The record gives the reactivity of an RNA of 207 nucleotides to 2A3. Conditions: 150 mM KOAc, 10 mM MgCl2 and 150 mM bicine (pH 8.5), 24 C. Values cover nucleotides 27 to 156.

[RMDB]
RNA sequence: GGGAACGACUCGAGUAGAGUCGAAAAUUAAUACUGCUACGUUUUUAAGACCCUUAGUUAUUUAGCUUUACCGCCCAGGAUGGGGUGCAGCGUUCCUGCAAUAUCCAGGGCACCUAGGUGCAGCCUUCAUGCCUCAUGCCGUUCGCGGCAUGAGGAACUGUUGUGUUAACUUCGGUUAACACAACAGAAAAGAAACAACAACAACAAC
Reactivity to 2A3 in 0.01 (KOAc 150mM, MgCl2 10mM, bicine 150mM(pH8.5), 24C), signal-to-noise 1, nucleotides 027 to 156: u060u030a040a060u030a120c040u030g070c020u040a010c070g080u030u080u060u020u070a090a040g050a080c000c010c040u010u100a010g070u090u070a140u190u160u070a020g010c010u010u100u030a020c020c030g030c000c000c000a010g000g020a010u040g070g060g080g030u000g020c000a000g000c040g080u100u070c000c000u010g010c010a030a020u000a030u100c000c010a000g000g000g010c000a020c000c000u010a000g010g010u030g080c020a030g030c000c020u000u090c030a060u100g080c020c000u010c000a000u000g000c000c000g000u040u060c160g040c000g130g000c000a000u000g000a000g000g000a000a000